[RMDB]
RNA sequence: GGGAACGACUCGAGUAGAGUCGAAAACACACACUGUCCAUUGUCUAAUAUGGCCGAAAUGCUUAGGGUGGCACGCUGAGCUACUACAGCACCUCUGUACUUGCGCUUGGUUGAGUUUAUGGCGGGAAGAUAUUGAAGAGUUCGCUCUUCAAUAUCUAAAAGAAACAACAACAACAAC
Reactivity to DMS in 0.01 (KOAc 150mM, MgCl2 10mM, bicine 150mM(pH8.5), 24C), signal-to-noise 9, nucleotides 027 to 126: c070a110c140a090c110a080c070u000g010u010c020c020a050u000u000g010u000c070u010a100a100u010a050u000g010g020c020c040g010a070a070a080u010g010c040u000u010a090g010g000g020u000g010g010c040a060c110g010c080u000g000a090g010c040u000a050c090u000a060c070a040g010c090a120c100c050u000c030u000g010u000a040c080u000u000g010c080g010c050u000u010g010g000u000u000g010a080g010u000u010u000a060u010g000g010c040g000g000g000a120
Reactivity to 2A3 in 0.01 (KOAc 150mM, MgCl2 10mM, bicine 150mM(pH8.5), 24C), signal-to-noise 7, nucleotides 027 to 126: c070a010c010a000c010a010c040u060g040u050c010c010a050u070u090g040u030c020u050a080a070u100a210u250g050g000c010c010g070a080a070a040u110g000c030u100u090a050g040g080g010u050g040g000c030a010c050g060c040u040g020a010g020c020u060a040c030u020a020c040a010g020c020a040c010c010u020c020u030g030u060a050c020u030u060g040c030g020c060u030u050g060g000u080u090g030a050g040u070u110u080a070u070g030g000c020g020g000g000a040
Source: RMDB library OK2TST, as collected in RNAgym. This 177-nucleotide RNA was probed chemically with DMS and 2A3. The DMS profile rests on 23,197 reads. 2A3 adducts were read by reverse transcription with SuperScript II with manganese. The RNA was probed in 150 mM KOAc, 10 mM MgCl2 and 150 mM bicine (pH 8.5) at 24 C.